[RMDB]
RNA sequence: GGGAACGACUCGAGUAGAGUCGAAAAGCAGUUUGACUGGGGCGGUACGCGCUUGAAAAGAUAUCGAGCGCGCCCUAAGCCUAUCUCAGCCGAGUCAGAGACUCGGCGAAGAGUGCAAGAGCAUAAGUAGACCAAUGAUUUUCGAAUCAUUGGUCUAAAAAGAAACAACAACAACAAC
Reactivity to DMS in 0.01 (KOAc 150mM, MgCl2 10mM, bicine 150mM(pH8.5), 24C), signal-to-noise 6, nucleotides 027 to 126: g000c040a050g010u010u020u000g000a080c070u010g000g020g030g010c100g010g010u010a100c130g010c010g030c010u010u000g000a020a110a140a180g010a190u050a070u000c000g000a000g000c010g010c020g030c290c010c010u000a030a090g010c020c020u000a080u010c020u000c060a290g000c000c000g010a010g020u000c030a290g010a230g020a020c000u000c010g010g000c000g010a040a030g010a030g010u010g000c060a070a080g000a130g020c060a090u020a080a110g000
Reactivity to 2A3 in 0.01 (KOAc 150mM, MgCl2 10mM, bicine 150mM(pH8.5), 24C), signal-to-noise 4, nucleotides 027 to 126: g020c030a040g020u070u160u200g160a140c070u050g000g000g010g000c020g010g020u060a020c050g000c000g000c000u000u020g020a060a090a060a040g220a090u130a050u160c000g030a000g000c000g010c000g020c010c000c000u030a090a010g000c000c000u070a070u110c010u000c010a010g000c000c000g000a000g000u010c030a040g030a020g000a300c000u000c000g010g000c000g000a040a000g010a010g000u070g000c040a060a060g010a030g080c010a050u020a210a020g080